Source: RMDB library M2PK90, as collected in RNAgym. Structure probing data (DMS) for a 177-nucleotide construct. DMS adducts were read by reverse transcription with MarathonRT. In probing experiments dimethyl sulfate is read out at A N1 and C N3, which are open when not base-paired.
[RMDB]
RNA sequence: GGGAACGACUCGAGUAGAGUCGAAAAAAAAAGGAACUUCCCGGCAAAUCCUCCUGUCAGGUGCUUGCGCUCAAAUUUGCCAGAUGCGUAAUCGCGAAAAAGUACCAUUAAUGAGAGGAGGAAAAAACUUCAUAUGUGAAUUCGUUCACAUAUGAAGAAAAGAAACAACAACAACAAC
Reactivity to DMS in 0.01 (KOAc 150mM, MgCl2 10mM, bicine 150mM(pH8.5), 24C), signal-to-noise 1, nucleotides 027 to 126: a040a080a080a230a040g000g000a090a110c150u000u000c020c020c000g000g020c090a060a090a100u010c000c010u010c000c010u000g000u010c000a060g000g020u000g000c020u000u000g010c040g000c030u010c110a100a060a110u030u000u000g020c030c060a220g000a080u000g030c020g030u000a040a130u040c090g010c060g010a000a030a050a070a010g030u000a000c000c010a110u000u000a150a170u000g000a040g000a020g000g000a000g000g000a000a020a040a030a060a080